[RMDB]
RNA sequence: GGGAACGACUCGAGUAGAGUCGAAAAUACCGCAGUCCUGCGGUGCGGCAGUGUGGAGACCUGCCGUAAGCCGUGUUGUUUUGACAACCGGGAGAAAGCGUAUGCGGAGGCAGCGCUUUCAGGGUCUAAAAGUAUGGGAUCUUCGGAUCCCAUACAAGACUGUUUUAGCGUUCGCGCUAAAACAGUCAAAAGAAACAACAACAACAAC
Reactivity to 2A3 in 0.01 (KOAc 150mM, MgCl2 10mM, bicine 150mM(pH8.5), 24C), signal-to-noise 2, nucleotides 027 to 156: u100a010c000c010g020c000a010g060u070c000c070u030g010c000g010g010u000g000c000g000g000c000a000g010u040g020u110g300g100a050g030a080c000c000u000g010c000c010g000u010a010a000g040c010c020g080u080g010u100u000g000u000u100u060u150g060a030c030a050a030c040c000g060g000g000a110g010a010a000a000g000c000g000u050a300u210g000c040g040g090a070g300g000c000a000g010c000g000c000u000u000u000c000a010g000g000g000u000c010u060a040a070a070a070g000u010a000u010g000g000g000a000u010c010u020u080c180g060g000a000u010c000c010c000a000u000a000c000a000a010